Source: RMDB library TTRDEL, as collected in RNAgym. An RNA of 177 nucleotides, treated with 2A3 and DMS and read out base by base. For DMS the reverse transcriptase was MarathonRT. The RNA was probed in 150 mM KOAc, 10 mM MgCl2 and 150 mM bicine (pH 8.5) at 24 C.
[RMDB]
RNA sequence: GGGAACGACUCGAGUAGAGUCGAAAAGAUAUGGAGAUACUGACUUUUGACGGUUAAUCGGAAACGAUUGGACCGAUAAGUCACUAUCUCCUAAGUCAAAAUCGUUUCUAGUUCGCUAGAAACGAAAGGGACUAAAACAGUUCGCUGUUUUAGUCCCAAAAGAAACAACAACAACAAC
Reactivity to 2A3 in 0.01 (KOAc 150mM, MgCl2 10mM, bicine 150mM(pH8.5), 24C), signal-to-noise 2, nucleotides 027 to 126: g030a000u060a020u070g000g000a000g010a010u020a000c040u010g040a020c030u020u180u260u300g210a060c000g000g010u010u030a020a000u000c010g000g010a000a050a010c010g000a000u010u040g120g050a000c020c000g060a060u080a180a000g000u020c000a000c000u010a000u000c010u000c000c000u010a020a010g000u000c030a000a030a010a300u050c010g010u010u000u050c000u010a000g000u010u070c180g060c220u020a010g050a020a010a000c000g010a000a000a000
Reactivity to DMS in 0.01 (KOAc 150mM, MgCl2 10mM, bicine 150mM(pH8.5), 24C), signal-to-noise 1, nucleotides 027 to 126: g000a030u010a300u030g000g000a040g010a020u000a020c110u000g000a020c000u010u000u000u010g030a190c090g000g010u000u000a030a000u000c010g000g000a090a030a190c000g000a010u010u010g010g000a030c010c000g000a100u000a030a040g030u000c000a010c120u000a020u000c010u020c000c000u010a000a080g010u000c030a080a060a070a140u010c010g000u010u000u010c000u000a000g000u010u040c250g030c000u010a040g000a020a010a000c000g000a020a070a130